[RMDB]
Source: RMDB library OK2TST, as collected in RNAgym. An RNA of 177 nucleotides, treated with DMS and 2A3 and read out base by base. Values are in units of 0.01, from 0 to 300, in steps of 10. Values cover nucleotides 27 to 126. The RNA was probed in 150 mM KOAc, 10 mM MgCl2 and 150 mM bicine (pH 8.5) at 24 C.
RNA sequence: GGGAACGACUCGAGUAGAGUCGAAAAAGACGUGGUGAUCCCGUACGACCGUGGUGAUCUGGUGGCUCGCCUGCACGCUAACGGGCGCGUUCAGCAGGCAGAGCACAAUUCGAACGGCACCCGGAUACACUGGUAAUAGUUUCGACUAUUACCAGUGAAAAGAAACAACAACAACAAC
Reactivity to DMS in 0.01 (KOAc 150mM, MgCl2 10mM, bicine 150mM(pH8.5), 24C), signal-to-noise 9, nucleotides 027 to 126: a070g010a090c050g020u010g010g020u000g000a140u010c030c010c010g020u010a090c160g010a130c070c020g010u010g010g030u010g010a070u010c070u000g020g020u000g010g010c010u000c000g000c000c000u000g030c010a060c050g010c040u010a090a150c160g010g000g020c300g010c040g000u000u010c150a110g020c000a010g010g010c010a050g020a010g010c010a020c040a060a090u010u010c110g010a100a120c050g000g000c030a050c010c000c000g000g010a170u010a130
Reactivity to 2A3 in 0.01 (KOAc 150mM, MgCl2 10mM, bicine 150mM(pH8.5), 24C), signal-to-noise 9, nucleotides 027 to 126: a000g120a040c070g050u110g010g070u060g060a100u060c000c010c000g010u040a040c060g050a050c020c010g070u160g020g050u080g030a230u080c040u090g160g110u090g160g040c000u000c000g000c000c000u010g000c030a010c030g010c020u070a230a070c110g100g090g000c050g000c010g040u090u160c070a020g000c010a000g020g000c040a040g000a000g020c010a000c010a050a080u160u130c060g050a070a030c010g020g000c010a010c000c010c000g000g000a030u080a050